[RMDB]
RNA sequence: GGGAACGACUCGAGUAGAGUCGAAAACCAUAAGUGCUUCGGCACUUAUGGAAAAAGCGUACUACUGGUGGGGGAGCUUUACGUCCCAAAUAGGACGUUGAGCGUUGAUCCGUAACAUCCAGUAUCGCAAAAACCAUUGUGCUUCGGCACAAUGGAACUUAGGGCGUCAGUUCGCUGACGCCCUAAGAAAAGAAACAACAACAACAAC
Reactivity to 2A3 in 0.01 (KOAc 150mM, MgCl2 10mM, bicine 150mM(pH8.5), 24C), signal-to-noise 1, nucleotides 027 to 156: c000c000a000u000a000a000g020u000g050c020u050u300c300g080g000c010a000c000u000u000a010u000g000g160a180a000a000a000a030g000c020g020u020a040c060u010a010c000u040g020g000u040g000g000g000g000g000a020g010c030u000u000u020a000c000g030u050c030c060c000a280a260a110u300a090g000g000a000c000g000u010u020g020a020g000c020g130u290u030g000a000u020c000c000g000u060a150a030c060a190u190c060c000a000g000u000a020u160c030g030c060a100a100a000a000a000c000c000a000u010u000g000u000g010c000u010u030c150g060g000c010a010c000a000a000u000g000g000a000a030